Conditions: 150 mM KOAc, 10 mM MgCl2 and 150 mM bicine (pH 8.5), 24 C. The record gives the reactivity of an RNA of 177 nucleotides to DMS and 2A3. It was measured as part of the RMDB library RFMREP.

RNA sequence: GGGAACGACUCGAGUAGAGUCGAAAAGCAUUUCUCGUCAAUCUAUAUCGCACUGUGCAAGCCAGCAGUCGCCUUCCCGUCGUCGACCCGCGCCGUUCCAGCUUCCACUCUUUCGCUCACACGCACGCUAUUGCAUCAUCUUCGGAUGAUGCAAUAGAAAAGAAACAACAACAACAAC
Reactivity to DMS in 0.01 (KOAc 150mM, MgCl2 10mM, bicine 150mM(pH8.5), 24C), signal-to-noise 2, nucleotides 027 to 126: g000c120a090u000u000u000c020u000c030g000u010c060a070a100u000c070u000a060u000a070u000c070g020c060a120c070u000g030u020g020c100a090a090g000c060c050a090g020c100a080g000u010c040g000c030c050u000u000c020c010c020g000u020c080g000u010c030g010a080c050c000c040g000c060g020c020c010g040u000u000c020c020a050g010c030u000u010c030c050a070c020u000c040u000u000u000c040g000c080u000c040a040c090a070c130g000c070a040c180g030
Reactivity to 2A3 in 0.01 (KOAc 150mM, MgCl2 10mM, bicine 150mM(pH8.5), 24C), signal-to-noise 2, nucleotides 027 to 126: g110c050a110u060u080u000c050u030c010g070u030c040a020a090u030c050u080a080u020a040u200c050g020c050a090c030u070g070u090g060c030a020a060g010c010c030a010g020c020a020g060u030c010g060c010c000u030u050c000c000c000g050u050c010g020u010c040g040a070c020c010c010g020c010g020c040c030g020u030u030c020c000a010g010c020u060u000c000c000a070c030u060c000u020u090u070c030g040c060u020c010a040c010a010c050g100c000a040c040g070